[RMDB]
Description:
Chemical mapping of a 177-nucleotide RNA with 2A3 and DMS. For 2A3, 2,938 sequencing reads were counted. The DMS profile rests on 2,286 reads. It was measured as part of the RMDB library OK2TRN. The RNA was probed in 150 mM KOAc, 10 mM MgCl2 and 150 mM bicine (pH 8.5) at 24 C.

RNA sequence: GGGAACGACUCGAGUAGAGUCGAAAACGCAGCUGAAUCUGAAAACAAGCGUCUGGCAAAAUACCAGCAACAAGGACGUCUAAAUCGCAGGCUUACUAUCCAUCCGGCGCUGCGAGCAGAAAUCCAGCUUCAUAGACAUGUUCGCAUGUCUAUGAAGAAAAGAAACAACAACAACAAC
Reactivity to 2A3 in 0.01 (KOAc 150mM, MgCl2 10mM, bicine 150mM(pH8.5), 24C), signal-to-noise 3, nucleotides 027 to 126: c030g030c050a020g000c020u040g010a020a050u060c030u060g050a110a100a030a100c040a100a040g010c010g050u030c020u010g030g010c080a230a010a060a040u150a100c050c010a030g050c020a010a070c010a020a110g050g000a000c020g020u020c050u100a090a150a090u030c010g000c030a010g010g000c020u030u100a050c050u130a070u080c020c070a030u080c060c010g010g000c150g010c140u030g020c010g010a000g020c010a010g050a030a080a020u040c050c010a020g020
Reactivity to DMS in 0.01 (KOAc 150mM, MgCl2 10mM, bicine 150mM(pH8.5), 24C), signal-to-noise 3, nucleotides 027 to 126: c070g030c110a030g020c020u000g010a090a110u000c050u000g000a110a070a080a100c110a100a140g010c030g000u000c020u000g010g010c120a100a070a080a120u010a050c050c030a060g020c090a060a100c100a080a080g000g000a010c110g010u010c030u000a040a080a140u000c040g020c020a010g010g000c020u000u000a040c180u000a100u010c090c080a050u000c120c130g000g000c050g020c010u010g020c020g000a050g010c110a020g000a060a060a080u000c050c020a050g010